This 207-nucleotide RNA was probed chemically with DMS and 2A3.
[RMDB]
RNA sequence: GGGAACGACUCGAGUAGAGUCGAAAAUAUCCAACCGGCAGUGGAGGAUCUUCGUGCUCGUAGAAGGAGGGGUUGAGUACAUCGGUCGGCCAUCGUGAGGCCCCGGCCGCGUUAAAGUAGAACUGCACGUCCGGCAGAUUGUGCCGAUAGGUGAAACAGACGUUAGAAAAUUCGUUUUCUAACGUCUAAAAGAAACAACAACAACAAC
Reactivity to DMS in 0.01 (KOAc 150mM, MgCl2 10mM, bicine 150mM(pH8.5), 24C), signal-to-noise 3, nucleotides 027 to 156: u010a110u010c030c020a090a110c060c020g020g020c070a080g040u020g010g020a110g020g010a050u000c040u010u000c070g050u010g020c020u000c040g020u010a130g000a110a100g020g010a090g050g000g010g010u000u000g000a090g000u020a080c030a100u000c040g030g060u010c020g010g020c020c010a070u000c100g030u000g000a160g020g010c040c050c030c050g010g010c010c000g040c080g030u010u000a050a070a110g000u000a110g000a080a290c060u000g000c010a050c040g020u000c040c000g040g010c020a080g010a130u000u000g010u000g010c000c030g010a050u000a050g030g020u020g010a080a110a100c180
Reactivity to 2A3 in 0.01 (KOAc 150mM, MgCl2 10mM, bicine 150mM(pH8.5), 24C), signal-to-noise 4, nucleotides 027 to 156: u150a030u020c020c010a020a080c060c020g040g020c040a060g060u040g050g020a040g030g010a050u030c020u110u120c090g030u040g040c010u000c030g070u070a030g060a170a020g030g040a030g000g010g000g030u030u080g010a020g030u030a020c000a050u060c040g010g010u000c010g010g010c020c010a060u080c110g070u060g090a050g070g010c020c040c020c000g010g000c000c010g020c020g030u040u150a080a080a050g030u050a030g030a150a060c050u050g000c050a030c030g070u060c060c020g010g000c010a020g020a170u110u160g060u090g040c000c000g010a030u080a040g050g020u060g010a110a000a000c030
Source: RMDB library OK3TST, as collected in RNAgym. The RNA was probed in 150 mM KOAc, 10 mM MgCl2 and 150 mM bicine (pH 8.5) at 24 C. For DMS the reverse transcriptase was MarathonRT. For 2A3 the reverse transcriptase was SuperScript II with manganese.